[RMDB]
RNA sequence: GGGAACGACUCGAGUAGAGUCGAAAAAUAGUGUUAUUCGUAACACUAUAUAUCCGAACUCAAGGAUUCGUUCCAGAGACAUGCAUGCUAGCAUGAAAGCAUCUGAACAAGCGUUCGCGCUUGUUAAGUCUGUGUGCACAUUCGUGUGCACACAGACAAAAGAAACAACAACAACAAC
Reactivity to DMS in 0.01 (KOAc 150mM, MgCl2 10mM, bicine 150mM(pH8.5), 24C), signal-to-noise 1, nucleotides 027 to 126: a020u010a000g000u010g010u000u000a040u000u050c130g000u000a000a010c030a040c000u010a010u000a030u010a090u000c190c030g000a030a050c000u010c020a050a170g000g010a000u010u000c000g010u000u010c000c000a070g010a140g010a120c040a020u010g010c020a170u020g010c160u000a110g010c000a020u000g010a020a060a090g000c150a060u000c050u000g000a010a010c000a000a000g000c000g010u010u000c300g030c000g020c000u000u010g000u000u000a060a090
Reactivity to 2A3 in 0.01 (KOAc 150mM, MgCl2 10mM, bicine 150mM(pH8.5), 24C), signal-to-noise 2, nucleotides 027 to 126: a000u020a000g000u010g010u010u010a030u030u060c210g030u030a020a000c010a010c020u010a000u000a000u000a000u040c030c040g010a200a050c000u000c030a040a050g110g000a020u000u050c010g000u000u000c000c000a010g020a000g010a120c020a000u050g010c010a010u130g180c050u170a060g010c010a040u030g070a060a020a000g080c040a080u050c030u140g030a040a000c010a000a010g000c000g020u040u100c220g000c000g000c070u010u020g000u010u030a010a010